[RMDB]
RNA sequence: GGGAACGACUCGAGUAGAGUCGAAAAGGGCGAGAAGGGCUGGAGUACGUAUGGGGCAACCAUGAACCAGUCAGAGUCUGGGCCCAGGAGUCGGCACCAGGCGACCCGCAUGGAUGGCCGCACGAGAAACAAUGCUUGGUUUCGACCAAGCAUUGUUAAAAGAAACAACAACAACAAC
Reactivity to 2A3 in 0.01 (KOAc 150mM, MgCl2 10mM, bicine 150mM(pH8.5), 24C), signal-to-noise 2, nucleotides 027 to 126: g020g010g000c040g000a050g020a100a060g130g010g000c000u000g030g030a060g060u090a060c160g130u150a090u080g020g000g030g080c060a040a030c020c000a030u020g020a020a050c000c000a020g000u000c010a020g020a020g110u000c010u050g060g080g020c000c000c000a030g120g020a060g060u140c010g020g000c040a050c030c000a010g000g010c000g040a170c070c000c030g000c030a020u030g000g040a040u030g140g000c020c000g130c030a030c070g130a150g120a090
Reactivity to DMS in 0.01 (KOAc 150mM, MgCl2 10mM, bicine 150mM(pH8.5), 24C), signal-to-noise 3, nucleotides 027 to 126: g010g010g020c010g000a090g020a120a100g000g000g020c030u000g000g000a050g000u000a090c180g000u010a060u010g000g010g010g020c150a100a120c010c010a020u010g000a120a110c020c020a030g010u000c030a040g000a300g010u000c010u000g020g030g000c010c000c040a100g000g010a110g000u000c050g000g000c030a110c010c000a020g000g010c010g010a100c130c070c060g020c040a050u000g010g000a100u000g010g010c000c010g010c110a080c090g000a170g020a180
Record summary:
An RNA of 177 nucleotides, treated with 2A3 and DMS and read out base by base. Reactivities are given for positions 27 through 126. The 2A3 profile rests on 1,447 reads. For DMS the reverse transcriptase was MarathonRT. The data come from the RNA Mapping Database (RMDB), library OK2TST.